The record gives the reactivity of an RNA of 177 nucleotides to DMS and 2A3. For DMS the reverse transcriptase was MarathonRT. Values cover nucleotides 27 to 126. The data come from the RNA Mapping Database (RMDB), library OK2TRN. 2A3 adducts were read by reverse transcription with SuperScript II with manganese.
RNA sequence: GGGAACGACUCGAGUAGAGUCGAAAAUGGAGUUAGUUUGGGCUUCAAUCGCACUAUCUCUUACUGAACCGCAUCGGAAGGUCAUGCGCUGUUCGACAAGCCUGUGAUAGUUUCGAUGGGAGCGGUACCGCUUGCAUACGUUCGCGUAUGCAAGCGGAAAAGAAACAACAACAACAAC
Reactivity to DMS in 0.01 (KOAc 150mM, MgCl2 10mM, bicine 150mM(pH8.5), 24C), signal-to-noise 2, nucleotides 027 to 126: u000g040g010a140g020u010u000a040g000u000u010u010g040g010g000c020u010u000c050a050a090u020c050g030c300a130c050u000a050u000c010u000c030u040u000a040c060u000g010a040a050c020c000g040c000a030u010c060g010g000a040a040g000g000u000c080a050u000g000c300g000c080u000g000u000u000c120g050a130c160a060a060g020c080c010u000g030u000g000a010u010a040g010u000u000u000c010g000a010u010g010g040g010a050g010c010g020g000u020a090
Reactivity to 2A3 in 0.01 (KOAc 150mM, MgCl2 10mM, bicine 150mM(pH8.5), 24C), signal-to-noise 2, nucleotides 027 to 126: u100g030g020a060g050u040u060a020g020u090u200u130g130g040g000c020u090u060c060a020a090u020c050g000c020a010c000u020a020u040c010u030c000u060u100a090c040u030g000a040a000c010c020g090c040a010u020c060g090g040a140a130g150g050u130c010a000u020g010c000g030c070u070g030u150u130c030g060a010c050a130a040g070c000c080u100g060u000g020a030u020a040g190u010u000u140c000g020a000u000g020g000g030a010g010c010g060g000u050a110